[RMDB]
RNA sequence: GGGAACGACUCGAGUAGAGUCGAAAAGGGCCGGAACGGACGUCGCGCGUCAGCCGCUCCAGUUCGUUUCGACGGAGCAACGAGCUAGCGCCGGCAACCUUGCUGGCGCGAUCAACGAUCCGGAGUGCAGCUACCCAGGAUUCGUCCUGGGUAGCUGAAAAGAAACAACAACAACAAC
Reactivity to DMS in 0.01 (KOAc 150mM, MgCl2 10mM, bicine 150mM(pH8.5), 24C), signal-to-noise 1, nucleotides 027 to 126: g050g000g000c020c020g020g010a090a090c000g010g000a120c140g000u020c030g000c050g000c060g000u030c140a170g030c060c140g000c020u030c060c040a120g000u010u000c000g000u000u000u030c020g000a030c060g000g010a040g020c000a080a070c050g030a040g050c000u000a070g000c000g020c040c010g000g000c000a030a130c090c110u130u000g000c000u000g000g070c000g000c000g010a060u030c130a040a160c010g050a070u030c000c000g000g000a070g000u000g000
Reactivity to 2A3 in 0.01 (KOAc 150mM, MgCl2 10mM, bicine 150mM(pH8.5), 24C), signal-to-noise 2, nucleotides 027 to 126: g090g000g000c070c040g000g070a060a030c020g000g040a000c020g020u050c070g010c000g000c010g110u090c020a050g040c010c020g040c000u070c040c030a070g040u070u010c050g060u040u030u150c070g050a020c110g060g000a030g010c000a020a110c040g010a000g000c030u110a060g050c040g030c030c000g020g000c020a100a270c010c070u090u040g010c000u010g000g000c000g000c020g030a000u060c060a000a030c010g020a160u000c000c000g000g030a040g060u130g070

The record gives the reactivity of an RNA of 177 nucleotides to DMS and 2A3. 2A3 adducts were read by reverse transcription with SuperScript II with manganese. The 2A3 profile rests on 976 reads.